An RNA of 207 nucleotides, treated with 2A3 and DMS and read out base by base. High DMS reactivity at an A or C suggests that its Watson-Crick edge is free. The reactions ran in a buffer of 150 mM KOAc, 10 mM MgCl2 and 150 mM bicine (pH 8.5), at 24 C. DMS adducts were read by reverse transcription with MarathonRT. It was measured as part of the RMDB library M2RFPK. For DMS, 4,762 sequencing reads were counted.

[RMDB]
RNA sequence: GGGAACGACUCGAGUAGAGUCGAAAACCGUGACAUUGCGAAAGCAAGGCUGGCUGUAGGUAGUCCUGGGCGGCGACAGCCUUGGACUGCGGCGUAAAGGUGUACCUGGGGCCGUUAAACCUAUCGUGAAAGGCAACUUGGUUCGCCAAGUUGCCAACAUGGACAUAGUGUUCGCACUAUGUCCAUGAAAAGAAACAACAACAACAAC
Reactivity to 2A3 in 0.01 (KOAc 150mM, MgCl2 10mM, bicine 150mM(pH8.5), 24C), signal-to-noise 2, nucleotides 027 to 156: c010c010g030u090g030a110c130a190u060u030g010c010g080a110a010a040g030c020a000a090g060g050c060u050g040g020c030u050g020u040a020g000g010u010a010g020u000c000c000u020g000g020g000c010g040g000c040g110a070c070a010g000c000c000u000u010g010g000a000c020u020g020c000g000g020c000g030u090a020a070a040g050g020u160g040u120a180c000c010u030g000g000g080g010c000c000g000u030u080a050a070a030c040c020u040a050u110c090g010u040g160a140a060a050g010g000c000a000a000c000u000u010g020g000u010u030c110g060c040c000a000a000g000u000u000g000c010c000a000a000
Reactivity to DMS in 0.01 (KOAc 150mM, MgCl2 10mM, bicine 150mM(pH8.5), 24C), signal-to-noise 2, nucleotides 027 to 156: c010c000g020u000g000a110c090a090u010u000g010c000g000a160a140a170g000c030a060a030g020g020c030u000g000g020c020u000g010u000a050g010g040u000a090g010u000c010c010u010g010g040g030c000g020g000c040g000a150c170a180g080c010c020u000u000g010g010a030c030u000g010c020g030g020c000g040u000a050a180a030g010g010u010g000u000a080c010c000u000g000g020g030g000c000c000g050u000u000a060a090a090c010c020u000a060u000c070g020u000g000a030a050a100g020g010c010a010a000c000u000u000g010g010u000u000c300g010c010c000a000a040g020u000u000g000c000c000a010a020